RNA sequence: GGGAACGACUCGAGUAGAGUCGAAAAGGAUCUGAGUACUUAUAAGUGCGAAGUGAGUGAGGGUCUUACGAGCACGAAUUACAGCCCUCUAUUAAGUAUCGAAGAUCGGCCGGAGAUCGAGAUACGACUAUUAACCGGCGACUGUACGAAGAUCCGAGAUACGGACCUAUUUCGAUAGGUCCGUAUCAAAAGAAACAACAACAACAAC
Reactivity to 2A3 in 0.01 (KOAc 150mM, MgCl2 10mM, bicine 150mM(pH8.5), 24C), signal-to-noise 3, nucleotides 027 to 156: g000g000a000u000c000u000g020a000g010u000a010c050u120u140a110u110a300a060g000u010g010c010g030a090a010g030u010g030a000g000u100g010a000g000g020g010u120c010u010u000a010c020g010a020g030c010a010c040g100a140a140u220u150a100c040a060g070c010c010c000u000c000u010a150u120u190a120a090g000u010a010u020c030g010a050a020g010a040u010c030g020g000c010c000g000g010a080g000a020u010c010g000a010g000a040u010a020c020g000a000c000u070a080u300u020a170a040c000c000g010g010c010g020a050c130u080g000u000a000c000g000a000a000g000a000u000c000c000g000a000
Reactivity to DMS in 0.01 (KOAc 150mM, MgCl2 10mM, bicine 150mM(pH8.5), 24C), signal-to-noise 1, nucleotides 027 to 156: g000g000a010u000c000u000g000a300g030u000a020c040u000u000a030u000a080a240g000u000g040c000g020a170a170g000u000g020a250g010u000g010a070g020g020g020u000c080u010u010a140c010g000a300g020c000a170c030g000a130a060u010u000a130c030a170g020c020c000c000u000c020u000a090u010u000a110a130g000u000a060u010c020g000a060a150g020a030u000c040g000g090c090c060g020g000a300g000a020u000c020g000a300g000a100u000a090c020g000a060c090u010a070u010u030a100a040c000c000g000g020c020g000a170c100u020g020u000a030c030g030a190a070g000a120u020c020c030g000a120
The record gives the reactivity of an RNA of 207 nucleotides to 2A3 and DMS. For DMS the reverse transcriptase was MarathonRT. For DMS, 1,218 sequencing reads were counted. Source: RMDB library OK3TST, as collected in RNAgym. Reactivities are rounded to 0.1 and cut off at 0 and 3. The 2A3 profile rests on 1,688 reads. The RNA was probed in 150 mM KOAc, 10 mM MgCl2 and 150 mM bicine (pH 8.5) at 24 C. For 2A3 the reverse transcriptase was SuperScript II with manganese.